RNA sequence: GGGAACGACUCGAGUAGAGUCGAAAAAAGGAAGGAAUUCUAUGCAAAGCGUUUCUGAUUCUCUUAGUAUUUUGUGGAACAGCAUGAGACAUGUCUUCCAGUUGUGUAGGAUAAGUACAGCCCACUGAACACUGCUUACCAGCAGUUUACCACAAGACAUUAGUGGAGUCUUCGGACUCCACUAAUGAAAAGAAACAACAACAACAAC
Reactivity to 2A3 in 0.01 (KOAc 150mM, MgCl2 10mM, bicine 150mM(pH8.5), 24C), signal-to-noise 1, nucleotides 027 to 156: a000a000g050g010a000a010g030g030a060a050u150u000c010u030a040u160g050c050a050a020a060g060c080g060u070u040u000c030u010g130a070u110u010c050u010c000u030u060a050g010u060a060u110u020u090u030g100u080g030g040a050a050c040a050g090c000a000u110g080a010g010a110c040a070u090g060u010c000u060u030c020c010a020g020u030u110g040u030g010u030a010g010g050a060u030a170a070g040u160a070c030a050g010c010c000c020a060c050u070g000a030a010c030a000c030u010g020c020u070u110a080c010c010a000g010c000a010g000u020u010u000a040c010c010a030c010a000a130g110a010
Reactivity to DMS in 0.01 (KOAc 150mM, MgCl2 10mM, bicine 150mM(pH8.5), 24C), signal-to-noise 1, nucleotides 027 to 156: a100a120g000g020a100a060g000g010a130a060u000u000c020u000a110u010g020c030a050a120a130g020c130g000u000u020u000c030u010g000a080u010u000c030u000c050u000u020a150g030u000a050u010u000u010u030g000u020g000g000a080a130c040a080g000c020a100u000g000a130g000a100c090a080u020g000u010c030u000u000c000c000a120g020u000u000g000u000g010u000a000g000g010a060u010a010a130g020u000a050c020a100g040c020c020c020a080c060u000g000a040a100c050a060c010u010g020c040u010u000a110c120c140a200g000c000a050g010u000u000u000a100c030c020a050c030a080a050g010a230